RNA sequence: GGGAACGACUCGAGUAGAGUCGAAAAGCGGCAGAGAAGCAACGCGAGCAGGCAGCCUUCUGCGAUGAGAUUACCCAGUUCGACUACCAGACCGCCUAUACCGCCUUCAAUGUCGUGCUGAACGAUAUGUUCCGUUACUGUUCGCAGUAACGGAACAAAAAGAAACAACAACAACAAC
Reactivity to 2A3 in 0.01 (KOAc 150mM, MgCl2 10mM, bicine 150mM(pH8.5), 24C), signal-to-noise 4, nucleotides 027 to 126: g040c020g020g010c020a010g010a000g020a140a010g020c050a040a090c040g010c040g100a050g020c030a000g020g030c020a030g060c040c050u060u070c000u030g010c040g060a100u120g040a030g010a050u010u140a130c010c030c010a010g010u040u040c040g060a070c020u120a060c000c030a030g010a050c000c010g020c010c000u090a090u070a080c020c020g030c000c000u040u060c050a060a080u070g020u070c010g040u030g020c040u100g040a030a030c040g000a060u010a060
Reactivity to DMS in 0.01 (KOAc 150mM, MgCl2 10mM, bicine 150mM(pH8.5), 24C), signal-to-noise 2, nucleotides 027 to 126: g020c050g030g020c000a070g000a180g010a030a080g000c100a050a110c150g000c080g030a120g010c110a100g010g020c000a100g040c070c010u000u000c000u000g000c030g010a040u030g000a120g000a090u000u020a080c000c010c020a170g020u000u040c010g000a020c040u000a070c100c040a020g000a080c190c090g000c030c000u000a080u000a180c040c040g000c110c000u000u000c040a100a210u020g010u010c010g000u020g090c070u000g010a170a090c030g040a130u000a020